[RMDB]
RNA sequence: GGGAACGACUCGAGUAGAGUCGAAAACGGAUACGCUUCGGCGUAUCCGAAAUAAUGCCGGAAUAAAGCGCGCGCAAAAACCGGCAAUAAAGCGCGCGCAAAAAACGCGUCACUUCGGUGACGCGAACUCUUACACUAAGUUCGCUUAGUGUAAGAGAAAAGAAACAACAACAACAAC
Reactivity to DMS in 0.01 (KOAc 150mM, MgCl2 10mM, bicine 150mM(pH8.5), 24C), signal-to-noise 2, nucleotides 027 to 126: c000g020g010a020u000a010c000g030c000u000u030c180g070g020c020g010u000a000u000c000c010g000a000a030a040u000a090a100u000g010c000c000g000g000a250a100u000a060a090a140g010c000g000c010g010c000g030c030a050a020a030a150a070c040c000g000g000c000a120a030u010a030a140a100g010c000g000c000g000c000g010c000a000a030a040a070a030a030c030g010c020g000u000c000a000c000u020u000c150g040g000u010g000a010c020g000c000g000a010a040
Reactivity to 2A3 in 0.01 (KOAc 150mM, MgCl2 10mM, bicine 150mM(pH8.5), 24C), signal-to-noise 3, nucleotides 027 to 126: c010g010g000a010u000a000c000g010c000u020u070c220g100g000c010g000u000a000u030c010c000g000a010a000a000u090a030a030u050g000c000c000g000g070a080a130u140a130a220a110g020c010g010c010g010c020g010c030a070a100a050a070a080c010c000g040g000c020a000a040u060a040a020a010g020c000g000c000g000c010g000c030a050a040a000a000a020a010c010g000c000g010u010c000a010c010u030u120c290g070g020u000g000a000c010g000c000g000a000a000